[RMDB]
RNA sequence: GGGAACGACUCGAGUAGAGUCGAAAAGCUCUAGGAGACUAGAGCGAUACGUUAGAGAGCUCGUGGCAUGACUAACGGAUAGCCAGGUACGAAGUUGCCAGAGGACAUAGCUAUAGCUAUGUCCAAAGAGGUAACAUACCUUCGGGUAUGUUACCUCAAAAGAAACAACAACAACAAC
Reactivity to DMS in 0.01 (KOAc 150mM, MgCl2 10mM, bicine 150mM(pH8.5), 24C), signal-to-noise 2, nucleotides 027 to 126: g000c020u000c000u000a000g000g000a260g030a270c000u000a000g000a000g000c010g010a060u040a010c100g010u060u020a000g000a260g000a120g020c010u010c100g030u050g000g040c070a080u000g050a240c040u000a050a070c010g000g000a040u000a110g010c060c000a020g000g060u000a030c030g010a080a190g010u000u010g000c010c000a110g010a210g000g000a000c000a000u000a000g000c000u010a090u040a120g050c000u020a000u000g000u000c000c010a010a040a110
Reactivity to 2A3 in 0.01 (KOAc 150mM, MgCl2 10mM, bicine 150mM(pH8.5), 24C), signal-to-noise 1, nucleotides 027 to 126: g030c000u020c000u010a010g000g120a280g040a030c000u000a000g000a000g030c000g020a000u030a000c010g000u050u110a010g000a000g000a050g120c060u010c110g050u150g000g060c060a040u060g020a190c050u050a010a000c010g050g000a030u070a020g080c010c000a000g010g000u110a020c100g210a210a030g010u120u010g030c020c090a020g000a050g030g000a000c000a000u000a010g000c000u080a020u100a300g000c000u000a000u010g020u000c000c000a000a000a000
Annotation:
Chemical mapping of a 177-nucleotide RNA with DMS and 2A3. Conditions: 150 mM KOAc, 10 mM MgCl2 and 150 mM bicine (pH 8.5), 24 C. For 2A3 the reverse transcriptase was SuperScript II with manganese.